[RMDB]
RNA sequence: GGGAACGACUCGAGUAGAGUCGAAAAUAUAUACCGACGCCCACAAUUCGUGUUGCUCACUUUUCUUUUUCUUUUUCCAUGGAAUGGUUUGAGCGUCAUACGUGGGCCAGAGCCAUAUUGGACAUCUCAUGGAUGUACGCUUCGGCGUACAUCCAUGAAAAGAAACAACAACAACAAC
Reactivity to 2A3 in 0.01 (KOAc 150mM, MgCl2 10mM, bicine 150mM(pH8.5), 24C), signal-to-noise 2, nucleotides 027 to 126: u160a010u070a000u030a180c040c040g040a000c070g070c000c000c000a010c010a010a090u280u220c180g010u120g080u150u160g000c010u000c000a000c020u000u040u160u040c090u090u020u070u050u080c230u190u220u100u100u030c020c020a080u250g040g020a010a000u040g020g000u000u030u120g000a000g020c000g000u000c030a060u040a010c120g000u070g000g010g000c010c010a000g020a000g000c040c000a010u080a140u170u210g000g000a000c000a080u000c080u000

Chemical mapping of a 177-nucleotide RNA with 2A3. The 2A3 profile rests on 460 reads. 2A3 adducts were read by reverse transcription with SuperScript II with manganese. Values cover nucleotides 27 to 126. The RNA was probed in 150 mM KOAc, 10 mM MgCl2 and 150 mM bicine (pH 8.5) at 24 C.